[RMDB]
RNA sequence: GGGAACGACUCGAGUAGAGUCGAAAAACAAUGGUGAGCAAGCUCAGCUCGUACUGAGAAGCCUAAAGUUGUUAUCAUGGUUACCCACCUUAGCUAAAACAGGUUUACUUUUUCAGAGUGGUCUUCGGGAAAUUCUUUUUUUCGAAAAAGAAUUUCCAAAAGAAACAACAACAACAAC
Reactivity to 2A3 in 0.01 (KOAc 150mM, MgCl2 10mM, bicine 150mM(pH8.5), 24C), signal-to-noise 7, nucleotides 027 to 126: a000c010a030a020u070g020g030u100g050a100g030c020a160a050g010c010u000c020a010g010c030u140c190g030u120a180c020u010g000a000g010a030a030g010c000c040u180a130a080a040g020u010u020g010u030u040a090u130c090a100u160g080g010u050u120a130c000c000c000a020c000c020u070u080a020g060c100u130a050a050a040a030c040a010g020g020u060u070u120a090c040u060u090u040u060u130c050a040g020a020g080u040g010g060u010c020u040u040c070g040
Reactivity to DMS in 0.01 (KOAc 150mM, MgCl2 10mM, bicine 150mM(pH8.5), 24C), signal-to-noise 2, nucleotides 027 to 126: a020c030a020a060u000g000g040u040g030a100g060c020a020a150g020c010u010c000a000g000c020u070c220g000u040a090c000u010g000a000g020a060a130g000c000c010u000a050a110a120g010u000u010g020u000u000a100u000c110a080u020g000g000u000u000a080c000c000c000a160c080c050u010u030a030g000c170u030a080a090a140a060c160a080g030g000u000u040u000a020c030u010u010u000u010u000c090a080g010a140g000u000g000g000u000c010u020u010c300g000
About this RNA: The record gives the reactivity of an RNA of 177 nucleotides to 2A3 and DMS. Reactivities are given for positions 27 through 126.